[RMDB]
RNA sequence: GGGAACGACUCGAGUAGAGUCGAAAAUUGCCUUGGCCUCCCAAAGUGCUGGGGAUUACAGGCAUGAGCCACCGCGCCGGGCCAGCCAAGGUGCUGUUAUAUGUGCUCUUUAGCCUCGGAGACUGUCAUUUCCCCUCACUGCACUGCAGAGCGAGGACGAUAAAUAGUGAUUCGUCACUAUUUAUCGAAAAGAAACAACAACAACAAC
Reactivity to 2A3 in 0.01 (KOAc 150mM, MgCl2 10mM, bicine 150mM(pH8.5), 24C), signal-to-noise 6, nucleotides 027 to 156: u090u060g030c020c000u020u020g120g010c020c020u050c010c020c010a070a060a000g050u060g020c070u090g010g000g010g030a030u090u190a060c050a090g030g020c040a050u080g040a040g030c020c030a090c040c040g030c020g000c020c030g030g060g000c090c060a030g020c030c010a110a060g050g000u050g030c020u050g030u210u050a210u050a080u230g100u120g040c010u020c000u040u060u150a050g020c020c000u030c060g020g010a040g040a100c060u090g060u100c060a080u040u060u050c010c010c010c010u020c020a060c030u020g000c050a100c200u110g000c020a010g010a020g060c040g020a010g010g010a020
Reactivity to DMS in 0.01 (KOAc 150mM, MgCl2 10mM, bicine 150mM(pH8.5), 24C), signal-to-noise 3, nucleotides 027 to 156: u010u010g010c020c050u010u000g000g000c040c020u000c010c010c000a080a120a080g000u010g060c030u000g020g010g010g020a060u000u000a090c040a050g020g010c020a090u000g010a190g010c040c010a080c060c070g010c040g040c020c070g000g040g000c040c070a130g010c040c050a100a210g010g020u000g030c020u000g050u000u000a110u000a100u010g000u010g010c030u000c030u000u000u000a110g010c000c010u010c070g020g010a150g010a110c040u000g020u010c070a290u000u010u000c000c000c000c010u010c030a050c030u000g000c030a100c090u010g010c160a120g010a070g030c040g000a040g030g010a290